[RMDB]
Conditions: 150 mM KOAc, 10 mM MgCl2 and 150 mM bicine (pH 8.5), 24 C. Structure probing data (2A3) for a 207-nucleotide construct.
RNA sequence: GGGAACGACUCGAGUAGAGUCGAAAAGGGGUCUAGCGCAAGGGUCCUGGAGCUUUUGACGCUCUGAAGCCUCCACGGAGCGAUAAGCUCCAGAGACCUGAUGACCGCUAGACGGAGGCACCCAAAACGGUGAAUUUCCUUCGGGAAAUUCACCGAAUACUAUCAAAGGCUUCGGCCUUUGAUAGUAAAAAGAAACAACAACAACAAC
Reactivity to 2A3 in 0.01 (KOAc 150mM, MgCl2 10mM, bicine 150mM(pH8.5), 24C), signal-to-noise 1, nucleotides 027 to 156: g050g010g020g020u000c000u010a020g020c010g000c050a100a280g010g010g000u000c000c000u000g000g030a000g030c040u210u300u300u160g050a010c010g000c000u010c000u010g040a110a060g000c000c000u030c030c000a000c000g010g010a000g000c040g030a050u150a300a060g000c010u000c000c020a010g010a050g010a000c000c000u000g000a000u000g000a000c010c020g000c000u000a010g000a020c000g000g000a000g000g000c010a060c000c010c000a020a100a050a050c000g020g000u020g000a010a000u000u000u010c050c090u180u300c300g040g000g000a000a000a000u000u000c000a010c000c000g000a000a000